[RMDB]
RNA sequence: GGGAACGACUCGAGUAGAGUCGAAAAGAUAUGGAGCCUAUGUAGGAACUACAAGACUACUCGGAAACGAGUAGCUUGCCGCAGAUAUAGGCUCCUAAGUCAAAACUGACCUGUUCGCAGGUCAGAAUCUAAGUAGGGUCUUCGGACCCUACUUAGAAAAAGAAACAACAACAACAAC
Reactivity to 2A3 in 0.01 (KOAc 150mM, MgCl2 10mM, bicine 150mM(pH8.5), 24C), signal-to-noise 1, nucleotides 027 to 126: g010a000u000a000u040g010g000a040g000c010c000u010a000u020g050u050a100g080g160a300a170c160u180a090c300a030a040g120a300c040u010a000c000u000c010g000g050a000a040a040c010g000a040g020u010a010g010c010u000u010g060c030c040g080c120a040g070a020u080a010u000a070g000g000c000u000c000c000u020a000a010g010u060c040a000a000a120a060c010u010g000a020c000c000u020g030u090u110c300g000c160a000g000g010u000c010a010g000a020a060
Reactivity to DMS in 0.01 (KOAc 150mM, MgCl2 10mM, bicine 150mM(pH8.5), 24C), signal-to-noise 2, nucleotides 027 to 126: g000a020u000a280u010g000g020a000g030c000c000u000a000u000g000u000a110g020g040a120a070c170u000a180c010a000a010g000a170c000u000a010c000u020c000g000g000a060a080a090c000g010a010g010u000a000g010c000u000u000g010c080c120g000c150a100g000a030u010a010u000a010g000g000c000u000c000c000u000a000a060g010u000c020a090a030a120a250c000u000g000a000c000c000u000g020u010u010c150g000c010a010g010g000u000c000a000g000a110a080

The record gives the reactivity of an RNA of 177 nucleotides to 2A3 and DMS. For 2A3, 1,094 sequencing reads were counted. The data come from the RNA Mapping Database (RMDB), library TTRDEL. In probing experiments dimethyl sulfate is read out at A N1 and C N3, which are open when not base-paired. High 2A3 reactivity points to a flexible backbone, as in loops and unpaired stretches. DMS adducts were read by reverse transcription with MarathonRT. The RNA was probed in 150 mM KOAc, 10 mM MgCl2 and 150 mM bicine (pH 8.5) at 24 C.